[RMDB]
Source: RMDB library OK1LIB, as collected in RNAgym. Chemical mapping of a 177-nucleotide RNA with DMS and 2A3. The 2A3 profile rests on 3,223 reads. Values cover nucleotides 27 to 126.
RNA sequence: GGGAACGACUCGAGUAGAGUCGAAAACACUUCCGCAUUGAGGAUAUUGUUGAAGGUCGCAAGUUAGUUUUAAUGAAACAGUGAUCAUGGAACAUCAUCCUAGGAAGCAGUGUGGCGGCUGGCAGAACGUAGUCAUGCGAUUCGUCGCAUGACUACGAAAAGAAACAACAACAACAAC
Reactivity to DMS in 0.01 (KOAc 150mM, MgCl2 10mM, bicine 150mM(pH8.5), 24C), signal-to-noise 2, nucleotides 027 to 126: c140a150c070u020u010c020c000g010c190a080u030u020g000a050g000g080a020u000a070u010u000g030u010u000g000a220a060g010g010u000c020g030c020a050a120g030u000u010a100g000u000u000u060u030a150a130u060g000a110a030a020c020a100g000u000g020a010u010c030a050u030g010g020a030a010c030a010u000c160a000u000c000c030u020a070g000g000a030a020g000c110a020g020u020g040u020g030g020c050g000g000c020u000g000g000c060a040g000a080a140
Reactivity to 2A3 in 0.01 (KOAc 150mM, MgCl2 10mM, bicine 150mM(pH8.5), 24C), signal-to-noise 5, nucleotides 027 to 126: c030a010c000u030u020c030c000g040c010a110u010u150g140a040g050g010a030u010a030u060u090g040u000u000g040a130a050g020g000u000c000g000c100a100a080g060u080u070a040g050u050u080u070u210a300a220u200g110a040a020a030c010a030g030u000g020a020u020c080a130u110g050g040a010a000c000a010u060c010a010u000c020c000u030a030g050g020a030a010g040c020a030g040u030g010u020g080g020c020g000g000c040u030g020g010c020a020g030a120a000